[RMDB]
RNA sequence: GGGAACGACUCGAGUAGAGUCGAAAAUACGCUAAGUUCGCUUAGCGUAAAAUAUAUGGCACUAUAUAAAACCUGAUAGCCGUAGAAGAUCAUGUAUCGGCAAAAUCACCAUCUUCGGAUGGUGAAAUGCAUAUAGGUGGUUCGCCACCUAUAUGCAAAAAGAAACAACAACAACAAC
Reactivity to 2A3 in 0.01 (KOAc 150mM, MgCl2 10mM, bicine 150mM(pH8.5), 24C), signal-to-noise 2, nucleotides 027 to 126: u060a000c000g030c010u000a000a000g020u040u060c130g020c120u010u000a000g000c010g000u000a000a000a000a000u070a000u000a020u010g080g060c080a000c140u000a030u040a020u040a210a130a050a070c020c000u030g090a070u070a070g020c000c030g020u020a010g030a190a000g010a090u120c060a060u140g060u120a090u080c000g010g040c050a060a060a030a090u000c000a000c010c000a000u010c000u020u090c250g070g000a010u000g000g000u010g000a000a000a000
Reactivity to DMS in 0.01 (KOAc 150mM, MgCl2 10mM, bicine 150mM(pH8.5), 24C), signal-to-noise 2, nucleotides 027 to 126: u010a000c000g000c000u000a000a000g010u000u040c280g040c000u000u000a000g010c000g010u000a000a010a050a030u000a030u010a030u000g010g000c060a090c100u000a070u000a050u000a080a050a080a120c000c010u000g000a140u000a090g010c000c010g010u020a100g010a140a170g000a080u010c080a040u010g010u000a070u000c000g010g000c040a080a050a110a120u000c000a000c000c000a000u000c000u000u030c100g020g010a010u010g020g000u000g000a000a030a050

Structure probing data (2A3 and DMS) for a 177-nucleotide construct. For 2A3, 1,657 sequencing reads were counted. As a SHAPE reagent, 2A3 marks flexible, mostly unpaired nucleotides at the ribose 2'-OH.